Structure probing data (DMS and 2A3) for a 177-nucleotide construct. 2A3 adducts were read by reverse transcription with SuperScript II with manganese. The 2A3 profile rests on 7,006 reads. Source: RMDB library OK2TST, as collected in RNAgym.
RNA sequence: GGGAACGACUCGAGUAGAGUCGAAAAGGAUUCUUCUCUAAGCCCUUGCUUCUCCUGGGCUUACACACACUAGUCACCUCCAACCUACUCUGGUCUUCAGGUGAAGAAGAAGCUCUACGAGGAGAUAGUACCGAGUAUUAUUCGUAAUACUCGGUACAAAAGAAACAACAACAACAAC
Reactivity to DMS in 0.01 (KOAc 150mM, MgCl2 10mM, bicine 150mM(pH8.5), 24C), signal-to-noise 5, nucleotides 027 to 126: g010g000a130u010u000c040u010u000c020u010c030u010a090a080g000c040c020c010u000u000g000c050u000u010c060u010c010c040u010g010g000g010c020u000u000a020c110a090c150a170c110a090c100u000a100g000u000c020a060c040c020u000c050c100a090a070c050c010u020a070c160u010c140u000g030g010u000c060u000u000c050a020g020g000u000g010a030a050g000a070a030g000a070a130g010c030u010c100u000a090c160g000a060g010g000a030g010a050u000a130
Reactivity to 2A3 in 0.01 (KOAc 150mM, MgCl2 10mM, bicine 150mM(pH8.5), 24C), signal-to-noise 3, nucleotides 027 to 126: g070g000a090u100u030c010u050u000c020u000c010u040a050a050g020c010c010c000u010u120g110c030u030u040c010u020c010c000u000g000g000g000c000u050u120a030c040a000c010a010c010a010c050u080a020g110u050c010a020c050c020u030c020c020a060a070c000c010u080a130c080u090c100u170g050g000u030c040u120u100c040a000g030g000u010g020a010a020g010a020a000g020a010a020g000c010u020c030u080a050c060g020a010g030g010a020g010a020u080a050